[RMDB]
RNA sequence: GGGAACGACUCGAGUAGAGUCGAAAACUGGAACAGUCGUAAAUGUCAGUAAGACAUGCGUGGGCAGAUCCGCGUCAGCAAGGUCAACUACUGAUAGUGGCAAGAUCAUACCGGAAUGGUGCUGUAGUCCACUAGGGGUGUUCGCACCCCUAGUGGAAAAAGAAACAACAACAACAAC
Reactivity to 2A3 in 0.01 (KOAc 150mM, MgCl2 10mM, bicine 150mM(pH8.5), 24C), signal-to-noise 1, nucleotides 027 to 126: c010u030g090g050a020a030c010a100g120u060c020g100u160a050a050a190u080g010u010c010a010g060u080a050a050g030a010c070a060u040g070c050g080u030g030g020g000c080a080g010a030u090c030c010g000c000g060u060c000a010g000c070a100a090g080g000u080c020a030a020c070u060a020c030u040g050a080u120a120g030u060g060g000c010a070a050g020a050u110c010a050u020a080c030c030g040g140a250a070u150g100g000u010g000c030u030g040u050a030g090
Reactivity to DMS in 0.01 (KOAc 150mM, MgCl2 10mM, bicine 150mM(pH8.5), 24C), signal-to-noise 2, nucleotides 027 to 126: c020u010g000g020a090a030c020a100g000u000c070g000u010a030a090a080u000g000u000c000a100g010u000a050a100g010a000c060a060u000g010c040g020u000g020g000g040c100a140g000a070u000c090c100g010c090g000u000c070a090g020c110a080a120g000g000u000c100a040a180c080u000a070c110u020g000a080u000a050g010u000g000g000c050a060a060g000a040u050c090a080u000a120c100c010g000g000a090a040u000g000g000u000g000c050u000g000u000a060g010

The data come from the RNA Mapping Database (RMDB), library OK2TRN. Structure probing data (2A3 and DMS) for a 177-nucleotide construct. Reactivities are rounded to 0.1 and cut off at 0 and 3.